[RMDB]
RNA sequence: GGGAACGACUCGAGUAGAGUCGAAAACGUCCGCCUUUCGAGGCGGACGAAAAAUCCUAAGUCGUUGCCCUCGCGACAUGCUUAUCGGAAACGAUAAGCAACAGCGAACUACGAGCGGCAACGAUAUGGAAAAAACCAAUCGGUUCGCCGAUUGGAAUCAAAUAACGUAGUUCGCUACGUUAUUUGAAAAAGAAACAACAACAACAAC
Reactivity to DMS in 0.01 (KOAc 150mM, MgCl2 10mM, bicine 150mM(pH8.5), 24C), signal-to-noise 2, nucleotides 027 to 156: c020g010u000c000c010g060c020c000u000u000u000c200g040a080g020g020c000g010g000a000c000g010a000a020a050a160a130u000c000c000u010a080a240g020u000c000g020u010u000g030c000c030c020u000c000g010c000g010a140c110a160u000g020c010u000u000a000u000c000g040g000a190a120a280c020g030a020u000a010a010g030c020a020a060c110a180g060c070g000a160a150c020u020a050c000g000a020g010c140g000g000c000a010a020c000g020a000u000a080u020g000g000a000a030a080a060a100a190c000c000a010a030u000c000g010g000u000u000c300g040c000c010g000a020u010u000g000g010a020a050
Reactivity to 2A3 in 0.01 (KOAc 150mM, MgCl2 10mM, bicine 150mM(pH8.5), 24C), signal-to-noise 4, nucleotides 027 to 156: c010g010u000c000c010g010c010c000u140u090u120c200g010a000g000g000c000g000g020a010c000g000a010a010a000a000a000u040c030c000u050a150a040g020u000c000g000u000u010g000c000c020c000u010c000g040c020g060a170c040a130u050g010c000u000u000a000u010c010g050g060a080a070a070c010g010a000u000a000a000g000c000a000a000c020a010g040c010g070a060a030c060u160a070c090g020a010g020c150g000g000c000a000a000c000g000a000u000a040u030g010g060a070a110a040a000a000a080c000c000a000a010u000c010g020g060u030u080c280g030c080c000g000a000u000u000g010g000a010a050
Record summary
Source: RMDB library RNAMAK, as collected in RNAgym. This 207-nucleotide RNA was probed chemically with DMS and 2A3. The DMS profile rests on 4,436 reads. For DMS the reverse transcriptase was MarathonRT. 2A3 adducts were read by reverse transcription with SuperScript II with manganese. Reactivities are given for positions 27 through 156. Conditions: 150 mM KOAc, 10 mM MgCl2 and 150 mM bicine (pH 8.5), 24 C.